[RMDB]
RNA sequence: GGGAACGACUCGAGUAGAGUCGAAAAGUUUAUGCAAAGGCACUUCGCAAUGUGUGCUCAAACAUUGCUUAUUCAAACACGCUUCACAAUGUGCGACAAAGAACCAUUGUUAUAAGAGCUAAUGUUUACCACGCCUAAAGGUUCGCCUUUAGGCGAAUCGUAUGACUCGCUUCGGCGAGUCAUACGAAAAAGAAACAACAACAACAAC
Reactivity to 2A3 in 0.01 (KOAc 150mM, MgCl2 10mM, bicine 150mM(pH8.5), 24C), signal-to-noise 1, nucleotides 027 to 156: g030u160u230u070a180u250g040c040a130a090a200g100g000c010a070c140u000u000c090g140c170a120a050u170g010u000g060u080g160c160u080c200a000a000a040c010a030u020u020g020c020u090u120a230u180u190c100a030a190a090c070a070c100g000c000u150u080c100a000c010a000a000u020g060u140g090c040g100a080c080a200a160a000g010a090a000c000c000a010u000u000g010u060u080a090u050a130a110g110a000g000c030u030a020a270u020g050u000u000u050a080c090c010a060c000g000c000c000u000a010a010a010g000g000u000u060c070g150c020c000u000u000u000a010g000g000c020g000a000a000